[RMDB]
RNA sequence: GGGAACGACUCGAGUAGAGUCGAAAACGGUCUCGAAGCUCUGGGUAUGAACGAUUUUAAACUCGCUUAUAUCAGUGAUACAUAUGGUUCAGAAAUUGUUUAUGACCGAAAAUUUGUUCGUGUAGCUAACUGCGACAUUGAGGUUACUGGUGAUAAACCAUCCGUCAGUUUUCGAACUGACGGAUGGAAAAGAAACAACAACAACAAC
Reactivity to DMS in 0.01 (KOAc 150mM, MgCl2 10mM, bicine 150mM(pH8.5), 24C), signal-to-noise 1, nucleotides 027 to 156: c080g040g000u010c000u020c060g030a110a150g040c060u000c030u040g020g000g020u000a000u010g040a030a030c000g020a050u020u000u020u010a070a150a110c250u010c020g040c040u000u000a020u000a040u000c090a180g010u010g020a110u000a090c060a080u010a080u020g040g030u010u010c020a120g000a100a100a090u010u010g000u000u010u000a140u010g020a100c020c040g010a040a040a060a090u000u000u020g030u000u010c100g000u010g050u010a110g100c090u000a070a090c060u000g000c000g000a110c000a100u000u010g000a180g000g030u000u000a020c010u000g010g040u010g020a030u000a020a070a150
Reactivity to 2A3 in 0.01 (KOAc 150mM, MgCl2 10mM, bicine 150mM(pH8.5), 24C), signal-to-noise 2, nucleotides 027 to 156: c040g030g030u030c080u030c040g070a070a040g010c010u040c050u130g040g000g040u040a030u070g020a040a000c010g000a000u000u010u070u290a080a120a020c010u040c050g010c060u130u100a030u030a050u170c020a050g000u040g080a010u020a140c080a090u170a040u140g180g020u110u000c010a010g050a040a120a080u080u070g060u040u080u020a030u040g010a040c010c010g010a040a000a080a000u170u070u060g070u050u050c020g010u030g050u060a010g020c040u030a020a180c050u100g000c010g000a000c010a030u020u100g080a050g100g000u020u000a030c010u030g000g000u030g000a040u040a050a040a000
Chemical mapping of a 207-nucleotide RNA with DMS and 2A3. 2A3 adducts were read by reverse transcription with SuperScript II with manganese. For DMS, 1,678 sequencing reads were counted. Reactivities are given for positions 27 through 156. DMS adducts were read by reverse transcription with MarathonRT.